[RMDB]
RNA sequence: GGGAACGACUCGAGUAGAGUCGAAAAGAAAGCGGAAUCCAACGACCAGCCAGAAGAUGCCGCAUCAGGUGAAAAGAAACACCUGAUCAAAGAAAACGCGUGAAGCUGGUCAACACGCGAAAGAAAAGAUAUAUGCGUGAUUCGUCACGCAUAUAUCAAAAGAAACAACAACAACAAC
Reactivity to 2A3 in 0.01 (KOAc 150mM, MgCl2 10mM, bicine 150mM(pH8.5), 24C), signal-to-noise 8, nucleotides 027 to 126: g040a020a070a010g000c000g000g030a030a070u070c030c010a040a040c030g010a010c000c000a000g020c010c030a050g050a210a030g040a110u120g070c000c000g000c010a010u010c000a000g000g000u020g070a140a120a080a080g200a060a130a020c000a000c000c000u000g000a010u020c010a000a100a010g120a020a090a020a020c010g000c000g000u000g010a010a010g000c010u010g000g000u000c000a000a020c010a000c000g010c010g050a030a070a030g120a010a090a010a010
Reactivity to DMS in 0.01 (KOAc 150mM, MgCl2 10mM, bicine 150mM(pH8.5), 24C), signal-to-noise 5, nucleotides 027 to 126: g010a020a100a090g000c000g000g010a110a020u000c060c060a110a130c130g010a040c000c000a020g020c030c110a190g010a130a100g020a100u010g000c000c000g020c020a060u000c020a000g000g010u000g010a070a050a180a140g000a220a140a090c000a000c010c020u010g020a010u000c190a090a050a110g000a070a110a120a130c040g010c010g000u000g000a140a120g000c000u000g000g000u010c030a080a070c020a000c000g010c000g000a120a080a090g000a060a070a100a160